Description
An RNA of 207 nucleotides, treated with DMS and 2A3 and read out base by base. DMS adducts were read by reverse transcription with MarathonRT. 2A3 adducts were read by reverse transcription with SuperScript II with manganese. For 2A3, 2,037 sequencing reads were counted.
[RMDB]
RNA sequence: GGGAACGACUCGAGUAGAGUCGAAAACGAGAUGAUGCCGCCGCUUCUGGGUGCUAGCUCGGCGAGACAUCUCAGCAGGAUUAGUAGUAGCGACAGCUUCACGAGCAGCAGCAGCAGCAGCAAUUUGAGCAAUACCGCGGCCAACUGUGCGGCCAGCCAGAACCAAUCUUUUCGAAGAUUGGUUCUGAAAAGAAACAACAACAACAAC
Reactivity to DMS in 0.01 (KOAc 150mM, MgCl2 10mM, bicine 150mM(pH8.5), 24C), signal-to-noise 1, nucleotides 027 to 156: c030g030a190g030a060u010g000a060u000g020c030c000g020c060c070g000c030u000u000c040u000g000g080g030u000g060c060u000a060g070c010u010c010g000g020c030g000a200g000a060c050a070u000c000u030c060a180g000c090a160g000g000a180u000u000a140g020u000a110g010u000a090g000c030g010a060c040a180g000c020u000u000c060a100c010g000a090g010c010a100g000c060a060g040c040a060g000c050a150g000c000a050g010c050a040a100u000u030u000g000a160g000c070a060a110u000a060c010c040g000c020g050g000c030c030a040a080c060u010g020u000g010c140g000g010c000c000a210g010c130
Reactivity to 2A3 in 0.01 (KOAc 150mM, MgCl2 10mM, bicine 150mM(pH8.5), 24C), signal-to-noise 3, nucleotides 027 to 156: c050g010a030g020a100u140g030a050u130g040c010c020g010c020c010g020c060u080u040c040u070g100g000g160u070g030c070u040a140g000c010u010c030g030g010c060g000a080g010a040c040a070u050c050u030c060a020g060c030a030g000g110a050u120u090a060g090u050a030g020u040a010g050c030g100a100c090a040g000c010u080u060c070a050c080g000a010g000c000a000g000c000a000g020c000a000g000c000a000g000c000a000g010c040a040a090u130u050u130g050a060g000c000a020a030u040a160c020c090g000c030g010g000c010c010a020a130c080u050g080u130g120c030g030g010c010c010a030g030c030